[RMDB]
RNA sequence: GGGAACGACUCGAGUAGAGUCGAAAACCAAUGGGAAACCAUUGGCAACUCGGAAACGAGUUGAACGCGGAAUUACGAUAGAAACGCGCGACAAUGCGAUUUUAAGCAUUGUCGAUUACGCCCAUGUCGAUUUUAAGACAUGGAGCGAACUAUCGAAGCAUGUAGGUCCGUUCGCGGACUUGCAUGCAAAAGAAACAACAACAACAAC
Reactivity to 2A3 in 0.01 (KOAc 150mM, MgCl2 10mM, bicine 150mM(pH8.5), 24C), signal-to-noise 5, nucleotides 027 to 156: c000c000a000a010u010g000g000g010a040a010a030c000c000a000u000u000g000g000c000a000a000c000u000c030g040g060a120a100a070c020g000a010g000u010u010g040a160a040c030g020c020g040g070a170a070u140u060a120c000g000a000u000a010g110a080a140a010c030g010c000g000c010g000a000c000a000a000u000g020c030g140a180u050u110u120u300a100a010g000c000a000u000u000g000u000c000g010a000u000u010a030c010g000c000c010c000a000u000g000u000c010g020a070u050u070u070u300a080a010g000a000c000a000u000g000g000a030g000c000g000a010a020c000u000a000u000c000g010a000a010
Reactivity to DMS in 0.01 (KOAc 150mM, MgCl2 10mM, bicine 150mM(pH8.5), 24C), signal-to-noise 1, nucleotides 027 to 156: c020c010a080a030u000g000g020g030a210a120a230c000c000a020u020u000g010g040c020a010a010c020u000c030g010g000a170a150a300c010g030a020g020u000u010g050a150a150c080g020c020g000g010a180a190u000u010a120c020g000a020u010a000g020a050a110a070c090g040c110g030c070g040a070c020a020a010u000g030c000g000a210u000u000u000u000a120a300g000c000a030u010u000g010u020c020g000a040u000u020a060c000g020c000c010c010a030u000g010u000c000g010a280u000u020u030u000a120a200g000a010c000a010u000g000g000a040g000c010g020a040a090c010u000a010u000c010g000a130a300
Source: RMDB library OK3TST, as collected in RNAgym. An RNA of 207 nucleotides, treated with 2A3 and DMS and read out base by base. DMS adducts were read by reverse transcription with MarathonRT. The DMS profile rests on 1,883 reads. 2A3 adducts were read by reverse transcription with SuperScript II with manganese.